An RNA of 177 nucleotides, treated with DMS and 2A3 and read out base by base. Values are in units of 0.01, from 0 to 300, in steps of 10. The data come from the RNA Mapping Database (RMDB), library OK1LIB. Conditions: 150 mM KOAc, 10 mM MgCl2 and 150 mM bicine (pH 8.5), 24 C. For 2A3 the reverse transcriptase was SuperScript II with manganese.
RNA sequence: GGGAACGACUCGAGUAGAGUCGAAAAAUGCCGCAUUCAGCGACGGUCACUCUAGUGGGCUACUGUCGAUCUAGCGUUGACAUCUACAUACUAUAUAGUAAUACCAAUACUCAAGACUACGAAACGGGCCUAUACUGAUAUUCGUAUCAGUAUAGGCAAAAGAAACAACAACAACAAC
Reactivity to DMS in 0.01 (KOAc 150mM, MgCl2 10mM, bicine 150mM(pH8.5), 24C), signal-to-noise 5, nucleotides 027 to 126: a050u030g000c000c010g000c030a090u000u000c110a100g000c060g000a060c040g010g010u000c030a070c040u010c040u010a060g020u010g000g000g030c070u000a050c110u010g010u000c030g030a050u010c060u010a100g010c030g030u000u020g020a080c050a070u010c080u020a080c080a080u000a070c050u010a130u020a120u020a060g000u000a040a100u010a090c080c080a030a040u000a060c050u000c080a030a040g020a080c120u000a060c090g000a030a080a070c150g000g000
Reactivity to 2A3 in 0.01 (KOAc 150mM, MgCl2 10mM, bicine 150mM(pH8.5), 24C), signal-to-noise 9, nucleotides 027 to 126: a010u100g030c010c010g050c030a040u100u110c060a030g030c020g080a050c030g060g020u010c020a020c010u040c010u040a050g080u160g090g010g000c000u040a020c030u090g040u050c020g010a040u010c030u060a010g020c010g060u040u050g030a020c010a060u030c020u060a030c030a080u090a030c040u040a060u080a070u080a220g070u080a070a070u050a150c030c020a050a050u050a090c010u030c060a030a080g050a110c050u070a060c140g060a050a080a030c040g010g060